[RMDB]
RNA sequence: GGGAACGACUCGAGUAGAGUCGAAAAGAACGUUGGCGGCGUGGAUUAGGCAUGCAAGUCGAGCGAGAAUCUGUUGAAUGAUCCUUCGGGUGAAUGAUUCAGAGGACAGCGGCAAACGGGGUAGUAAUACGGUUUUACGAUUCGUCGUAAAACCGUAAAAAGAAACAACAACAACAAC
Reactivity to DMS in 0.01 (KOAc 150mM, MgCl2 10mM, bicine 150mM(pH8.5), 24C), signal-to-noise 2, nucleotides 027 to 126: g020a120a060c050g040u010u000g020g030c070g060g010c080g000u000g000g040a080u010u000a020g030g050c090a080u010g020c050a100a080g000u000c040g000a070g000c040g040a070g000a200a120u000c000u000g000u000u000g020a180a060u000g010a130u020c010c000u010u030c170g000g020g030u000g040a150a020u000g000a150u000u000c020a010g010a040g000g010a190c160a050g000c000g000g000c120a050a040a100c040g000g000g000g010u000a070g010u000a020a170
Reactivity to 2A3 in 0.01 (KOAc 150mM, MgCl2 10mM, bicine 150mM(pH8.5), 24C), signal-to-noise 2, nucleotides 027 to 126: g060a010a030c000g000u020u040g070g000c000g040g030c020g020u040g000g060a150u160u110a060g000g090c090a010u090g100c030a020a100g020u020c040g040a000g000c070g000a100g120a150a010u040c000u000g050u000u000g000a020a000u050g000a040u040c000c000u000u040c220g170g000g000u030g000a000a010u020g030a060u000u000c030a010g000a000g070g010a010c000a020g020c000g050g000c060a000a080a000c020g000g000g080g010u030a120g030u050a040a060

An RNA of 177 nucleotides, treated with DMS and 2A3 and read out base by base. DMS adducts were read by reverse transcription with MarathonRT. The RNA was probed in 150 mM KOAc, 10 mM MgCl2 and 150 mM bicine (pH 8.5) at 24 C.